[RMDB]
RNA sequence: GGGAACGACUCGAGUAGAGUCGAAAAAUCGUGUUUUACCCUGGAGGCCCAAUCCCCUUCUAGCCUAGAUAAAAACAGAUUAGGAUUGGGACAACUCACUCAGUUGUCCGCUCGACUAGCGGGAGCUAGAAGGGUCUGCCGGAGGAUGCGGAGUCUUGGUUUUUAUAGAGUUCGCUCUAUAAAAACCAAAAGAAACAACAACAACAAC
Reactivity to 2A3 in 0.01 (KOAc 150mM, MgCl2 10mM, bicine 150mM(pH8.5), 24C), signal-to-noise 1, nucleotides 027 to 156: a000u240c120g000u150g040u040u060u160u170a120c020c000c050u100g060g070a060g010g060c040c010c040a000a070u030c000c000c000c020u010u000c000u000a000g010c000c000u090a080g080a170u140a090a120a020a020a020c020a030g080a050u070u090a030g090g020a030u030u140g030g000g000a000c010a010a030c000u080c090a060c030u250c040a020g000u000u000g010u060c080c000g060c040u000c080g080a100c030u030a010g030c050g030g040g000a030g010c000u020a020g000a020a010g000g000g010u010c030u060g090c000c000g030g000a010g070g010a030u100g070c030g030g090a030g000u030c020u070u030